Chemical mapping of a 207-nucleotide RNA with 2A3. The RNA was probed in 150 mM KOAc, 10 mM MgCl2 and 150 mM bicine (pH 8.5) at 24 C.
[RMDB]
RNA sequence: GGGAACGACUCGAGUAGAGUCGAAAAACUACUCAAUACGUCCUCGUCGUACAGAACGGUAACAUGUUUUCCGAACAUCCGCGCUUGGGUAUACGAGUAUACACCUUACCCAACCCUCGCCAACGGGAGUGCAUCCACGAGUUCGCUCGUGGAUGAAUGGUACUGGACUGUUCGCAGUCCAGUACCAAAAAGAAACAACAACAACAAC
Reactivity to 2A3 in 0.01 (KOAc 150mM, MgCl2 10mM, bicine 150mM(pH8.5), 24C), signal-to-noise 1, nucleotides 027 to 156: a000c010u020a000c000u000c000a020a100u030a040c030g060u030c030c000u000c000g110u060c000g030u090a070c100a130g050a050a000c070g000g070u090a070a070c010a290u060g210u070u060u090u070c100c000g140a190a060c030a020u120c040c080g000c020g050c110u010u060g000g020g060u110a030u000a010c000g050a140g040u000a000u020a080c020a130c020c000u060u040a040c000c000c000a020a020c020c000c000u020c020g060c020c030a040a160c020g090g000g000a010g040u230g030c030a040u060c000c000a010c000g000a000g000u030u130c160g020c060u000c000g000u040g030g000a000u000g000a000a020
The data come from the RNA Mapping Database (RMDB), library M2RFPK.